An RNA of 177 nucleotides, treated with DMS and read out base by base.
The data come from the RNA Mapping Database (RMDB), library OK2TST.
The reactions ran in a buffer of 150 mM KOAc, 10 mM MgCl2 and 150 mM bicine (pH 8.5), at 24 C.
Values cover nucleotides 27 to 126.
RNA sequence: GGGAACGACUCGAGUAGAGUCGAAAACGCUGAUGUCCUUGCCGUAGGUGAAAGUGCCGUUGGAAGUCGCCUUGUCCAGAACCGGCUGGAGGACGGCCAGAGUCAUCGCUUCGCCGACCAUGCUGGCACGGUGGGACAGGUUCGCCUGUCCCACCGUAAAAGAAACAACAACAACAAC
Reactivity to DMS in 0.01 (KOAc 150mM, MgCl2 10mM, bicine 150mM(pH8.5), 24C), signal-to-noise 1, nucleotides 027 to 126: c120g020c100u040g000a090u000g000u010c020c020u000u000g010c020c040g000u000a100g000g000u010g010a080a040a080g020u010g020c020c020g050u010u040g000g010a060a150g000u000c050g020c040c000u010u000g000u000c010c000a060g010a090a130c140c030g020g010c000u000g000g000a120g010g010a030c020g000g010c010c130a080g000a090g010u000c100a070u000c060g000c030u000u000c100g020c010c020g020a120c010c050a070u000g020c060u020g020g020c080